[RMDB]
RNA sequence: GGGAACGACUCGAGUAGAGUCGAAAACAACAGCGAAACAAAGCGGCCUGUCUGUGCGCUUUCCUUGGUUUCGUUGCAAUCAAGACGUUGCCUCCACACGGAAGCCGACUCCGAAGACGCACACACACGGCUAUUAUAGUUUCGACUAUAAUAGCCGAAAAGAAACAACAACAACAAC
Reactivity to 2A3 in 0.01 (KOAc 150mM, MgCl2 10mM, bicine 150mM(pH8.5), 24C), signal-to-noise 9, nucleotides 027 to 126: c040a010a010c010a010g030c010g050a060a030a040c040a050a070a020g030c040g060g090c020c030u190g060u180c060u080g080u090g040c030g010c020u050u060u070c020c000u060u070g060g000u020u030u040c030g020u040u060g010c020a020a080u100c050a080a040g080a050c050g040u060u070g030c000c000u020c030c010a040c000a010c060g050g030a020a020g020c020c010g040a050c020u010c040c010g030a030a010g040a040c030g010c020a010c000a000c000a000c000a010
Reactivity to DMS in 0.01 (KOAc 150mM, MgCl2 10mM, bicine 150mM(pH8.5), 24C), signal-to-noise 4, nucleotides 027 to 126: c130a120a200c060a070g000c010g010a030a050a030c050a080a060a070g040c150g010g000c010c030u010g000u010c090u030g000u010g020c050g000c060u010u000u010c080c060u000u000g020g010u000u000u010c070g020u000u010g010c150a060a090u000c120a100a040g020a120c130g010u010u020g000c050c010u000c040c040a060c110a150c050g000g000a060a100g010c030c010g000a060c030u000c030c070g000a080a020g010a080c050g010c030a010c060a020c100a060c060a220